[RMDB]
An RNA of 177 nucleotides, treated with DMS and 2A3 and read out base by base. The DMS profile rests on 9,232 reads. For 2A3, 19,964 sequencing reads were counted. Conditions: 150 mM KOAc, 10 mM MgCl2 and 150 mM bicine (pH 8.5), 24 C.
RNA sequence: GGGAACGACUCGAGUAGAGUCGAAAAGAUAUGGAUCCCGUGGCAAGGCGACAUGUCGGAAACGACAUGCGCUGAUGACCCACAGGGAUCCUAAGUCAAAAGUGUCCAAAGUUCGCUUUGGACACAAGAACAAAGUAUCGUUCGCGAUACUUUGUUCAAAAGAAACAACAACAACAAC
Reactivity to DMS in 0.01 (KOAc 150mM, MgCl2 10mM, bicine 150mM(pH8.5), 24C), signal-to-noise 6, nucleotides 027 to 126: g000a030u000a240u020g000g000a000u000c000c000c010g010u000g000g010c150a100a080g010g010c000g000a220c010a010u000g010u000c000g000g000a070a050a150c000g020a020c000a010u000g000c010g020c000u000g010a040u010g000a090c300c000c000a000c000a150g010g000g000a000u000c000c000u000a000a070g000u010c030a120a100a120a160g000u000g010u000c000c000a000a020a010g010u000u020c300g010c000u000u000u000g000g000a000c000a000c000a020a050
Reactivity to 2A3 in 0.01 (KOAc 150mM, MgCl2 10mM, bicine 150mM(pH8.5), 24C), signal-to-noise 5, nucleotides 027 to 126: g010a020u040a020u100g010g010a000u010c000c030c040g010u000g000g030c280a300a280g030g000c010g020a300c090a000u000g010u010c000g000g030a020a020a010c000g000a000c000a000u000g010c000g000c000u000g000a010u090g040a030c000c020c010a010c080a080g010g000g000a000u000c000c000u000a010a000g000u000c020a040a030a080a220g000u000g000u000c010c000a010a000a000g010u060u170c300g050c190u000u000u020g000g000a000c000a000c000a010a010